[RMDB]
RNA sequence: GGGAACGACUCGAGUAGAGUCGAAAAGGGCACGUCCAUGAUGAACACAUGGCUGAUGCGGCGCUCGGUGCGCAGCCCGGUGUCGCGCGCCACGACCUCGUGCAUCAGUUCGUCGGUAUGCAGGCUAACGAUGACUGACUUUCGAGUCAGUCAUCGUAAAAGAAACAACAACAACAAC
Reactivity to 2A3 in 0.01 (KOAc 150mM, MgCl2 10mM, bicine 150mM(pH8.5), 24C), signal-to-noise 2, nucleotides 027 to 126: g020g020g030c010a010c050g030u050c030c010a080u080g060a070u060g050a070a020c070a000c040a110u050g020g000c000u040g040a210u140g010c000g000g010c010g000c010u140c060g000g020u110g000c090g000c120a020g030c010c000c030g010g000u040g020u020c030g000c000g000c000g030c050c010a020c010g090a150c010c030u040c050g080u110g000c000a040u020c000a060g000u090u100c040g030u000c030g040g040u080a050u090g020c060a040g030g080c040u070a060
Reactivity to DMS in 0.01 (KOAc 150mM, MgCl2 10mM, bicine 150mM(pH8.5), 24C), signal-to-noise 2, nucleotides 027 to 126: g050g030g020c040a110c030g010u010c010c050a040u000g000a110u000g000a090a070c150a200c060a060u010g000g020c060u000g020a080u000g010c000g010g030c010g030c040u000c270g020g000u010g000c100g000c120a070g000c010c000c080g000g000u000g020u000c010g010c070g030c060g030c000c010a070c080g000a090c090c060u010c120g000u010g010c070a020u000c020a080g030u000u000c050g020u000c030g000g000u000a070u020g010c030a060g000g000c100u000a130